[RMDB]
RNA sequence: GGGAACGACUCGAGUAGAGUCGAAAAAUCAGAAUCACCAACAAUUUUAGAAGUCAGCUGCACAGUAGCAGACUGCAUUUAUUCUGCAGACUUUGGUGGUUCGCUAACACUACAGUACAAAGCUGACCGGUACCCUGAGAUUCGUCUCAGGGUACCGAAAAGAAACAACAACAACAAC
Reactivity to DMS in 0.01 (KOAc 150mM, MgCl2 10mM, bicine 150mM(pH8.5), 24C), signal-to-noise 1, nucleotides 027 to 126: a140u000c120a190g020a050a000u000c040a000c040c000a130a100c300a070a140u000u000u010u120a090g020a140a220g040u010c000a010g110c000u000g000c110a020c010a150g020u010a040g000c120a040g010a160c010u000g000c020a040u000u000u030a180u000u040c270u000g010c070a000g000a140c110u000u000u000g000g000u000g010g010u000u000c000g020c070u000a030a090c110a060c000u020a010c030a010g030u000a060c050a020a050a180g010c000u000g000a020c050
Reactivity to 2A3 in 0.01 (KOAc 150mM, MgCl2 10mM, bicine 150mM(pH8.5), 24C), signal-to-noise 1, nucleotides 027 to 126: a000u060c020a000g000a000a000u000c000a000c100c000a000a020c020a100a070u270u300u300u300a160g020a100a000g020u030c000a000g000c000u030g030c000a030c010a080g090u110a000g000c030a050g020a070c000u010g000c000a010u060u160u080a290u260u000c030u030g000c010a020g060a180c070u000u020u050g000g010u030g000g030u000u010c000g000c010u000a060a010c030a020c140u060a050c030a050g000u070a010c050a050a120a000g010c000u010g000a010c020